[RMDB]
RNA sequence: GGGAACGACUCGAGUAGAGUCGAAAAGAUAUGGAGUGUAGGACGCAACAGCUCCUGGGUCGGAAACGACCCAGGGAGACAUGCGUACUACACUCCUAAGUCAAACGCCGCUCUUCGGAGCGGCGAAUCACUACAACGUGUUCGCACGUUGUAGUGAAAAAGAAACAACAACAACAAC
Reactivity to DMS in 0.01 (KOAc 150mM, MgCl2 10mM, bicine 150mM(pH8.5), 24C), signal-to-noise 1, nucleotides 027 to 126: g010a050u020a190u010g000g000a030g010u020g000u000a000g000g000a000c000g020c000a110a100c260a190g010c020u000c000c010u010g030g000g030u000c000g000g010a050a050a110c020g020a000c010c000c000a010g000g020g010a040g000a060c100a140u040g000c000g000u000a010c000u000a000c000a000c000u010c000c010u040a010a030g000u000c000a090a150a250c050g030c010c000g040c000u000c000u000u010c100g050g000a040g040c000g010g030c000g020a000a000
Reactivity to 2A3 in 0.01 (KOAc 150mM, MgCl2 10mM, bicine 150mM(pH8.5), 24C), signal-to-noise 1, nucleotides 027 to 126: g050a020u070a020u080g000g000a000g000u000g000u000a000g040g010a000c010g010c010a260a300c110a300g070c000u020c020c000u020g040g000g040u000c010g000g000a040a000a020c000g050a010c000c000c030a000g000g080g020a010g000a000c050a160u300g000c010g000u000a000c000u000a000c000a000c000u030c000c000u000a000a010g020u000c020a030a020a050c050g020c000c000g000c020u030c000u070u070c250g150g020a060g040c020g000g010c010g000a000a000